[RMDB]
RNA sequence: GGGAACGACUCGAGUAGAGUCGAAAAAGCGAUUUUCGGCUAAUUAUAUAUACUUAAAAAAGGCUUGAAGGUGCUUAUUUUUUAUGGUAUAUUGUAAAUUGUGUUGAAAUGAAUAGCAAUUUUUUAUCUUGGAUAUAUAAUUCGUUAUAUAUCCAAGAAAAGAAACAACAACAACAAC
Reactivity to 2A3 in 0.01 (KOAc 150mM, MgCl2 10mM, bicine 150mM(pH8.5), 24C), signal-to-noise 1, nucleotides 027 to 126: a000g120c010g030a050u000u000u010u000c010g030g000c000u000a030a000u120u000a020u000a000u000a000u000a050c000u020u060a000a000a000a000a000a000g020g000c010u110u130g090a070a020g230g160u240g130c030u160u110a170u050u000u000u000u000u000a070u150g000g000u010a000u010a020u000u080g030u020a110a130a280u070u030g170u060g000u050u040g010a020a040a080u040g020a040a040u170a150g000c000a000a010u070u000u010u160u110u020a220u140
Conditions: 150 mM KOAc, 10 mM MgCl2 and 150 mM bicine (pH 8.5), 24 C. An RNA of 177 nucleotides, treated with 2A3 and read out base by base. Reactivities are given for positions 27 through 126.